[RMDB]
RNA sequence: GGGAACGACUCGAGUAGAGUCGAAAAAUCGCCGGUAAAGUAUCUUCAGCAUCUCAUAGGUGGAUCCUGUCAUUGUUGCCGUAUUAGAGUCCGGCAAUAUAUUUUCUCCAGACAGCCAGAGCUGAUAAAUCCACUAAUCCUUCGGGAUUAGUGGAUUAAAAGAAACAACAACAACAAC
Reactivity to 2A3 in 0.01 (KOAc 150mM, MgCl2 10mM, bicine 150mM(pH8.5), 24C), signal-to-noise 3, nucleotides 027 to 126: a000u090c040g010c040c000g020g050u200a080a070a050g080u080a120u070c050u050u020c050a020g020c010a160u010c040u020c090a180u120a160g000g060u030g080g020a050u080c030c030u050g030u050c060a100u000u110g000u010u020g010c000c010g010u040a110u030u120a050g090a050g050u030c010c000g000g000c010a000a000u010a000u000a050u010u100u070u000c050u040c030c000a050g000a080c010a010g020c020c010a040g030a000g050c030u000g030a040u080a030
Reactivity to DMS in 0.01 (KOAc 150mM, MgCl2 10mM, bicine 150mM(pH8.5), 24C), signal-to-noise 3, nucleotides 027 to 126: a060u010c080g020c030c010g010g000u000a060a080a120g000u010a040u020c010u020u010c020a070g000c000a080u020c050u000c100a050u020a080g020g000u020g020g020a100u010c040c020u020g010u010c050a100u000u010g000u010u000g000c050c080g010u000a080u020u020a100g040a290g000u030c120c010g000g000c010a050a030u000a010u040a050u010u030u020u010c010u010c020c030a090g000a070c060a040g000c070c040a080g000a090g020c020u000g010a030u030a020